[RMDB]
RNA sequence: GGGAACGACUCGAGUAGAGUCGAAAAGGGGUCGAUGACAUGGACCCACCAGAGCGAAGAACAUACUGAAGCCUCCACGGUAUGGGAGCUCUGGAUGGGUCCAACAGCAUCGACGGAGGCACCCAAAGAGAACCAAGAGUUCGCUCUUGGUUCUCAAGUCGUGUAUCUAGUUCGCUAGAUACACGACAAAAGAAACAACAACAACAAC
Reactivity to 2A3 in 0.01 (KOAc 150mM, MgCl2 10mM, bicine 150mM(pH8.5), 24C), signal-to-noise 2, nucleotides 027 to 156: g030g020g120g040u000c010g010a010u020g010a030c190a300u300g000g000a000c000c010c000a000c000c000a000g000a000g000c000g120a300a020g000a000a020c000a000u000a000c000u060g030a160a020g010c000c000u010c000c000a000c000g000g000u000a000u000g000g010g000a000g010c000u000c000u080g010g030a040u040g000g000g000u020c050c000a040a000c000a010g000c000a000u000c000g000a000c000g000g000a000g000g000c010a040c000c000c010a030a170a080g010a000g000a000a000c000c000a010a010g010a000g040u100u150c270g090c180u000c010u000u000g000g000u000u020c000u000c000a000a000